Background
An RNA of 207 nucleotides, treated with 2A3 and DMS and read out base by base. For 2A3 the reverse transcriptase was SuperScript II with manganese. The RNA was probed in 150 mM KOAc, 10 mM MgCl2 and 150 mM bicine (pH 8.5) at 24 C. The 2A3 profile rests on 453 reads. The DMS profile rests on 2,441 reads.
RNA sequence: GGGAACGACUCGAGUAGAGUCGAAAAAUAUUCCUUAGCAAGCCUCCUGGCGAUGAGCUAAGGCCACUAAUUGUUUCAAUUGAUUUUUCAGUUCAUCAACCUAUUUUCGGGAUUACAUUUGUUGGUAUCGAUCCUGUAGAUCAUCGUUAUCCACACACAAAAUGCCUAGUUUCGACUAGGCAUUUUGAAAAGAAACAACAACAACAAC
Reactivity to 2A3 in 0.01 (KOAc 150mM, MgCl2 10mM, bicine 150mM(pH8.5), 24C), signal-to-noise 2, nucleotides 027 to 156: a010u190a090u050u170c000c000u000u000a000g080c030a060a000g000c000c050u140c010c120u120g050g000c070g120a160u140g090a060g000c000u000a010a000g000g040c020c000a010c000u120a080a070u110u030g000u000u080u020c080a090a100u020u080g040a120u130u020u000u030u210c110a030g060u080u030c030a040u040c000a040a080c020c020u020a170u030u130u120u170c080g000g030g040a010u060u110a140c120a080u100u060u190g050u020u070g020g000u000a020u110c020g010a020u060c060c060u120g090u190a110g070a090u180c000a020u030c020g020u000u000a020u040c080c040a000c000a000c000a000
Reactivity to DMS in 0.01 (KOAc 150mM, MgCl2 10mM, bicine 150mM(pH8.5), 24C), signal-to-noise 2, nucleotides 027 to 156: a140u010a120u020u010c010c000u010u010a150g010c050a110a160g010c020c000u010c080c180u000g010g030c030g010a190u020g000a230g000c030u000a040a030g030g000c020c130a020c020u000a050a130u000u010g010u000u010u000c110a050a120u000u000g000a070u000u000u000u000u000c090a130g010u010u000c070a100u000c050a070a110c060c070u000a080u000u000u000u000c060g000g000g020a100u010u000a110c070a040u000u010u000g030u000u000g030g010u000a060u010c020g010a050u000c100c060u000g020u000a050g010a060u000c100a090u000c100g020u000u000a090u000c030c020a090c060a090c110a180